[RMDB]
RNA sequence: GGGAACGACUCGAGUAGAGUCGAAAAAAGGAUUUUUAUGGCUAUUAAUGCACGUGGUAUUAGUUCUAUGAAAGUAAUUGUAGAGGCCAACUACAUUGAAGAUGGAACUACUGUUACAAAAGUAAAAGUGUUAGAAAUCAUUCGUGAUUUCUAACACAAAAGAAACAACAACAACAAC
Reactivity to DMS in 0.01 (KOAc 150mM, MgCl2 10mM, bicine 150mM(pH8.5), 24C), signal-to-noise 2, nucleotides 027 to 126: a060a060g000g000a070u020u010u000u000u010a040u020g010g000c020u010a230u000u000a060a040u010g010c090a100c210g030u000g010g060u000a040u010u000a040g010u010u000c020u000a010u000g000a110a060a070g010u010a030a030u000u000g010u000a020g000a070g040g000c080c050a050a110c000u000a030c050a050u020u010g030a130a070g000a080u000g000g000a060a050c020u020a030c080u010g010u000u000a040c030a110a080a060a100g010u000a050a030a060a090
Reactivity to 2A3 in 0.01 (KOAc 150mM, MgCl2 10mM, bicine 150mM(pH8.5), 24C), signal-to-noise 2, nucleotides 027 to 126: a000a000g120g010a120u220u080u000u040u110a090u100g020g000c010u010a060u150u130a230a050u200g030c030a010c120g050u020g040g000u050a040u030u020a050g030u030u010c020u000a070u050g090a120a130a020g040u100a040a030u050u080g000u000a020g000a050g120g010c050c010a010a010c030u020a010c010a040u030u080g020a050a020g020a030u040g020g000a000a000c000u010a000c010u000g000u050u050a010c020a050a110a020a000g110u230a040a120a200a030
Chemical mapping of a 177-nucleotide RNA with DMS and 2A3.
It was measured as part of the RMDB library OK2TST.